[RMDB]
RNA sequence: GGGAACGACUCGAGUAGAGUCGAAAAGGUCCUCCCCAGGCCUUGCCCGCCUCUCCUGAUGCAGAGCUGGCUCCCUGCUCCUGGAGGGUGGGGCCAAAUCCGGGAUAGAUGGGGCUCCAGGCCAACACGACAUGUAGUACUUCGGUACUACAUGUCGAAAAGAAACAACAACAACAAC
Reactivity to 2A3 in 0.01 (KOAc 150mM, MgCl2 10mM, bicine 150mM(pH8.5), 24C), signal-to-noise 2, nucleotides 027 to 126: g020g040u030c000c020u030c030c000c000c010a000g000g000c020c020u000u040g070c000c030c000g060c000c010u120c020u030c000c010u040g040a090u220g080c060a030g020a070g090c050u060g020g040c060u190c000c000c020u020g030c000u020c070c040u070g030g020a100g060g000g030u070g000g010g000g000c000c010a020a040a040u020c040c020g050g000g020a020u110a050g060a050u210g020g020g010g010c020u030c040c030a040g000g000c010c000a040a020c080a020
Reactivity to DMS in 0.01 (KOAc 150mM, MgCl2 10mM, bicine 150mM(pH8.5), 24C), signal-to-noise 2, nucleotides 027 to 126: g020g000u010c010c030u000c020c000c000c040a230g000g000c000c020u000u000g000c000c000c000g010c060c010u010c010u010c020c010u000g020a160u000g040c130a030g010a060g010c170u000g020g010c040u010c040c010c040u010g020c000u000c040c070u010g000g000a080g000g000g000u000g010g010g000g010c040c050a000a110a150u000c030c040g010g010g000a070u000a080g000a050u000g000g000g040g010c080u000c100c090a010g000g030c100c040a080a080c200a150

This 177-nucleotide RNA was probed chemically with 2A3 and DMS.
For DMS, 2,215 sequencing reads were counted.
For 2A3 the reverse transcriptase was SuperScript II with manganese.
In probing experiments dimethyl sulfate is read out at A N1 and C N3, which are open when not base-paired.